[RMDB]
RNA sequence: GGGAACGACUCGAGUAGAGUCGAAAAUUGAAGGUAAAACAGCCUGUGGGUGAAACACACCCACAGGGGCCAUUGGGCGCUAGCACUCUGGUAUCACGGUACCUUUGUGCGCCUGUUUUACCGAAGGAGGGGGUGGCGUUCGCGCCACCCAAAAGAAACAACAACAACAAC
Reactivity to 2A3 in 0.01 (KOAc 150mM, MgCl2 10mM, bicine 150mM(pH8.5), 24C), signal-to-noise 1, nucleotides 027 to 129: u000u030g020a150a020g000g010u000a000a000a000a000c000a000g000c000c000u020g000u000g000g000g000u000g030a070a120a010c100a000c020a000c030c010c000a000c020a000g000g000g000g000c000c000a090u150u210g130g030g030c000g010c020u020a000g000c000a000c010u030c040u000g000g050u000a000u000c060a020c190g100g000u000a000c010c000u020u000u000g000u000g020c050g000c000c000u040g000u000u000u000u000a010c040c000g000a010a000g030g080a030g040g050
Reactivity to DMS in 0.01 (KOAc 150mM, MgCl2 10mM, bicine 150mM(pH8.5), 24C), signal-to-noise 2, nucleotides 027 to 129: u060u060g020a150a080g020g000u010a010a000a000a000c000a010g030c030c030u000g000u050g000g100g000u030g000a040a100a020c280a160c100a010c010c010c030a000c000a020g010g000g020g040c000c030a050u070u010g000g000g000c060g010c010u040a080g030c000a000c030u000c000u050g030g050u000a050u090c010a180c220g070g000u050a020c000c050u020u020u020g040u000g030c030g070c000c000u020g050u090u000u020u010a010c000c000g000a090a110g010g030a110g000g080